RNA sequence: GGGAACGACUCGAGUAGAGUCGAAAAGCUGCGAUCUCGCCCGCAACGGGAGCGGCCACCGGCAGUUCGGAUGCCAGCGGAAGGGCUUCCUGAGCGUCGCCGUAGCGCACCGCCGCCGCGAACAGCGGUGCCGUCCCCACUUCGGUGGGGACGGCACAAAAGAAACAACAACAACAAC
Reactivity to 2A3 in 0.01 (KOAc 150mM, MgCl2 10mM, bicine 150mM(pH8.5), 24C), signal-to-noise 2, nucleotides 027 to 126: g060c000u000g000c040g090a110u000c020u020c080g030c020c020c060g000c040a060a120c030g000g000g040a050g010c010g040g020c010c000a010c020c000g040g000c000a050g020u100u170c080g060g030a070u010g010c010c000a050g070c110g090g080a050a020g120g000g000c000u080u020c000c020u020g030a000g010c000g100u090c100g000c030c020g010u050a030g040c000g020c030a010c000c020g010c020c020g020c060c000g010c000g030a110a000c020a110g020c020g030